[RMDB]
RNA sequence: GGGAACGACUCGAGUAGAGUCGAAAAGAAAAAGACGUGGAAGUACAGAAACGGCAAUGUACUGAAGACAUGAGUGAAAUGCCGUAAAGAUACGAAAGUAUCGACUCUUGUCUGACACGUCGAAAAAGGGUAUUAAUUGCUUCGGCAAUUAAUACCCAAAAGAAACAACAACAACAAC
Reactivity to 2A3 in 0.01 (KOAc 150mM, MgCl2 10mM, bicine 150mM(pH8.5), 24C), signal-to-noise 3, nucleotides 027 to 126: g110a020a100a020a010a000g000a000c000g000u010g030g040a070a100g000u040a010c000a030g040a100a220a040c020g010g010c000a010a040u100g010u030a020c020u030g040a020a000g030a000c010a000u100g010a000g000u060g080a030a120a080u190g020c010c000g020u000a120a080a000g010a000u020a000c000g020a020a020a100g000u000a010u010c020g010a030c010u000c000u020u050g010u030c000u000g000a020c000a000c020g000u000c000g030a010a000a000a000a000
Reactivity to DMS in 0.01 (KOAc 150mM, MgCl2 10mM, bicine 150mM(pH8.5), 24C), signal-to-noise 2, nucleotides 027 to 126: g000a080a070a090a100a090g000a010c020g000u000g000g020a100a050g000u000a000c020a060g000a070a220a060c000g000g020c090a020a070u000g010u000a000c050u070g010a000a070g010a060c090a040u000g000a000g030u000g000a060a100a300u000g010c010c010g000u030a120a120a300g000a000u000a000c000g000a100a060a150g000u000a000u000c010g010a030c030u000c010u020u000g020u000c000u000g000a200c020a000c000g000u000c000g000a040a020a070a130a180